RNA sequence: GGGAACGACUCGAGUAGAGUCGAAAAGCCGAUGAAUUGCCGAGAAGCCUGUCUCGAAAUCGUCGACGCAUCGACGACGGUCCUGCCAUGAGACCGUAACGAGGACAUGUCGCCUCGAAUGGCGUCGUAUAACAUGAGUGGUUCGCCACUCAUGUAAGACGUCCCAAUUAUUCGUAAUUGGGACGUCAAAAGAAACAACAACAACAAC
Reactivity to 2A3 in 0.01 (KOAc 150mM, MgCl2 10mM, bicine 150mM(pH8.5), 24C), signal-to-noise 5, nucleotides 027 to 156: g030c010c040g010a020u080g040a090a230u130u150g070c080c030g010a000g020a050a040g060c060c180u180g060u030c010u010c040g000a050a040a060u010c010g020u000c010g000a050c110g020c100a100u050c000g010a000c010g000a000c000g000g010u000c010c010u060g020c020c000a030u040g030a010g010a060c010c020g020u080a010a010c010g000a020g000g010a020c070a130u200g040u140c110g020c010c000u020c000g000a020a010u010g010g030c010g030u070c040g010u030a110u040a180a030c010a000u000g000a000g000u000g030g040u060u070c170g050c040c000a000c010u000c000a000u000g000u000a000a010
Reactivity to DMS in 0.01 (KOAc 150mM, MgCl2 10mM, bicine 150mM(pH8.5), 24C), signal-to-noise 2, nucleotides 027 to 156: g040c000c010g000a030u000g030a120a090u000u000g000c040c020g000a090g010a080a170g010c070c060u020g000u010c000u000c010g000a090a050a040u000c030g010u000c010g000a010c030g020c100a130u000c030g000a020c040g010a040c010g050g010u000c000c020u010g010c060c230a140u000g000a090g000a050c010c040g030u000a040a120c010g000a050g020g020a070c040a110u000g020u010c050g020c000c010u010c020g010a100a160u020g010g000c030g020u010c000g030u040a110u010a140a060c000a030u000g000a010g050u000g000g010u000u010c300g020c020c000a000c000u000c010a000u000g000u010a050a180